[RMDB]
RNA sequence: GGGAACGACUCGAGUAGAGUCGAAAAGAAAAGCACGGCAAGCACAUGAAGCACAUGAAGCAGUACAAGCAGUACAAGCACAAGAAGCACUACAAGCAGUAGAAGCAGCCGAAGCACAUGAAAAAAAGUCGUAUCUUAUGUUCGCAUAAGAUACGACAAAAGAAACAACAACAACAAC
Reactivity to 2A3 in 0.01 (KOAc 150mM, MgCl2 10mM, bicine 150mM(pH8.5), 24C), signal-to-noise 1, nucleotides 027 to 126: g090a000a120a000a020g080c060a010c030g020g000c020a030a040g020c000a020c000a070u100g030a080a020g080c020a010c000a110u130g030a030a020g000c040a010g020u050a030c020a050a140g060c000a070g020u010a000c040a120a020g020c000a010c010a020a090g070a030a020g010c010a000c050u090a030c050a080a040g010c000a000g040u090a020g020a120a010g020c000a000g000c000c000g010a030a010g000c000a030c020a110u240g150a180a040a000a000a000a000a000
Reactivity to DMS in 0.01 (KOAc 150mM, MgCl2 10mM, bicine 150mM(pH8.5), 24C), signal-to-noise 1, nucleotides 027 to 126: g000a030a040a100a060g000c070a020c150g000g000c050a080a050g010c140a010c100a100u000g020a000a170g000c140a080c060a050u000g050a050a060g040c050a020g010u020a000c110a000a160g010c020a050g010u000a010c060a070a060g000c020a010c080a030a030g000a000a080g020c040a080c040u000a130c120a110a030g080c100a020g010u000a020g000a090a080g020c040a100g010c050c020g010a050a120g000c010a010c040a080u000g020a000a000a080a040a040a100a120